[RMDB]
RNA sequence: GGGAACGACUCGAGUAGAGUCGAAAAUUGAACGUGGUAACGUCCAUGUUGAUAAUGGCUCUAGUAUUAAUAGGAGACAGCUUGAUGUCGUUAAGAUGUUUCUUGCUAAGAAUCCUACUUGGUCCAAUGCAGUUUUUAUUUCACCUUAUAAUAGUCAAGUUUUAAAUAUAUUCGUAUAUUUAAAACUAAAAGAAACAACAACAACAAC
Reactivity to 2A3 in 0.01 (KOAc 150mM, MgCl2 10mM, bicine 150mM(pH8.5), 24C), signal-to-noise 1, nucleotides 027 to 156: u040u070g040a000a020c000g030u000g000g000u050a120a000c070g030u000c030c000a000u020g010u010u010g060a090u000a080a030u100g020g000c000u000c050u020a080g060u030a080u300u110a110a070u060a060g020g050a030g000a050c050a020g020c020u020u010g000a020u080g010u020c000g000u030u030a060a000g000a010u030g010u240u120u000c000u010u000g000c040u010a020a020g010a040a040u020c000c010u020a050c010u000u030g010g010u000c020c010a000a090u030g000c000a030g060u040u070u010u050u140a060u040u080u080c060a080c010c000u120u140a150u090a220a060u150a120g160u300c000a040
Reactivity to DMS in 0.01 (KOAc 150mM, MgCl2 10mM, bicine 150mM(pH8.5), 24C), signal-to-noise 1, nucleotides 027 to 156: u010u010g010a020a000c010g010u000g030g060u000a130a110c040g010u000c000c020a040u010g030u010u000g000a120u000a080a150u000g030g000c050u010c020u000a170g010u000a140u010u010a060a190u000a110g020g000a100g010a060c060a060g020c030u010u000g010a060u000g050u000c090g000u010u000a130a090g000a060u000g020u000u010u010c010u000u010g000c040u010a070a090g010a080a120u000c000c040u010a110c050u000u000g000g000u000c040c020a060a090u000g010c050a090g010u000u000u010u000u040a070u000u010u000c010a100c030c050u010u000a170u000a100a110u000a130g010u000c030a100